Structure probing data (2A3 and DMS) for a 177-nucleotide construct. Conditions: 150 mM KOAc, 10 mM MgCl2 and 150 mM bicine (pH 8.5), 24 C. Values cover nucleotides 27 to 126. The DMS profile rests on 4,963 reads. The data come from the RNA Mapping Database (RMDB), library RFM100.
RNA sequence: GGGAACGACUCGAGUAGAGUCGAAAAGAGGAAGCCCUCGGGCUUCUGCGCAGGCGUUCGAGGGCGGCCCGUCCGAUGCCCGCGGGUAGGCCGCUAGAGCCUGUCGGCGACGGCAGGCCCAGAUGGACCUAGUAACGAACUUCGGUUCGUUACUAGGAAAAGAAACAACAACAACAAC
Reactivity to 2A3 in 0.01 (KOAc 150mM, MgCl2 10mM, bicine 150mM(pH8.5), 24C), signal-to-noise 2, nucleotides 027 to 126: g140a020g010g060a100a100g000c030c010c030u030c040g010g010g000c000u030u020c000u040g030c070g020c100a080g040g000c050g070u130u120c020g040a050g000g060g000c000g000g000c020c000c000g000u010c000c020g020a060u130g030c000c010c000g020c020g000g030g000u020a070g040g050c000c000g000c020u040a040g000a000g050c000c000u030g030u010c000g000g050c070g020a110c000g010g000c000a000g000g000c000c000c000a070g020a030u200g020g010a000
Reactivity to DMS in 0.01 (KOAc 150mM, MgCl2 10mM, bicine 150mM(pH8.5), 24C), signal-to-noise 3, nucleotides 027 to 126: g010a260g040g000a080a060g000c000c000c000u020c280g000g000g000c010u010u020c010u020g030c130g020c220a100g000g000c200g000u020u000c060g020a160g010g000g010c030g000g000c010c000c010g010u010c010c010g000a040u010g010c010c000c030g020c000g010g000g000u010a060g000g000c000c010g010c050u000a070g000a110g000c000c000u020g000u000c000g000g000c280g000a250c030g000g000c010a010g000g000c000c010c050a050g000a070u020g000g000a300